[RMDB]
RNA sequence: GGGAACGACUCGAGUAGAGUCGAAAAGAUAUGGACCCUGAACUACAGAAGCGGUUAACAUGGAAGAGGAGCUCGGAAACGAGCUCUACCCACCUUCCAUGUUAACCCUUCUGCAGGGUCCUAAGUCGUGAAUAGAGUAGUUCGCUACUCUAUUCACAAAAGAAACAACAACAACAAC
Reactivity to DMS in 0.01 (KOAc 150mM, MgCl2 10mM, bicine 150mM(pH8.5), 24C), signal-to-noise 4, nucleotides 027 to 126: g020a110u010a300u000g010g000a020c000c000c010u000g000a090a060c110u030a300c010a010g000a010a010g010c240g050g000u000u010a000a000c000a010u010g000g000a000a000g020a140g010g010a000g010c010u000c000g020g000a090a110a250c000g000a000g000c010u000c000u000a020c030c050c120a300c140c000u000u010c000c000a000u000g010u000u000a010a000c000c000c000u000u010c010u000g000c000a000g020g000g020u010c000c000u000a020a080g010u020c110